RNA sequence: GGGAACGACUCGAGUAGAGUCGAAAAGGCUGUUGAAAUACAUUCCUGUGCCGGCAAUACAGUGUGUAUGGAGGUCUCAAUGGCUCGGAAGUGCCAGCAAACCGGCGUAGAUAUUAGCAGACGUAUCAUAGGAUGCAUCCGUUCGCGGAUGCAUCAAGUUGGUAGAAUAGUUCGCUAUUCUACCAACAAAAGAAACAACAACAACAAC
Reactivity to DMS in 0.01 (KOAc 150mM, MgCl2 10mM, bicine 150mM(pH8.5), 24C), signal-to-noise 2, nucleotides 027 to 156: g030g010c020u010g010u000u000g010a090a100a110u000a030c030a070u010u010c300c010u000g000u000g030c000c010g040g000c050a090a050u010a060c050a060g040u010g010u010g050u000a020u010g020g000a100g020g010u000c040u000c080a080a120u010g010g020c000u000c020g040g020a180a170g030u000g000c020c040a080g010c090a050a100a070c050c020g000g010c010g010u000a040g020a090u000a040u000u000a090g020c040a080g020a080c060g000u000a050u010c080a150u010a160g000g010a040u010g000c010a010u000c000c000g030u000u000c290g060c060g020g020a030u000g000c020a000u000c000a010a060
Reactivity to 2A3 in 0.01 (KOAc 150mM, MgCl2 10mM, bicine 150mM(pH8.5), 24C), signal-to-noise 4, nucleotides 027 to 156: g020g000c000u020g020u300u020g070a030a000a010u050a030c010a030u080u090c030c000u020g040u050g000c020c010g000g000c040a050a060u170a130c010a020g030u020g030u020g020u090a010u020g020g000a020g000g020u000c010u010c050a040a150u060g010g000c030u030c060g040g050a110a040g010u040g040c010c020a030g040c070a090a010a020c010c010g010g000c010g020u070a040g050a070u060a050u170u140a030g050c080a010g050a110c070g030u010a020u090c030a050u080a110g140g000a000u000g000c000a000u000c000c010g000u020u030c130g000c010g050g000a000u010g000c000a000u000c000a000a000
Source: RMDB library M2RFPK, as collected in RNAgym. Structure probing data (DMS and 2A3) for a 207-nucleotide construct. 2A3 adducts were read by reverse transcription with SuperScript II with manganese. The DMS profile rests on 3,753 reads. The reactions ran in a buffer of 150 mM KOAc, 10 mM MgCl2 and 150 mM bicine (pH 8.5), at 24 C.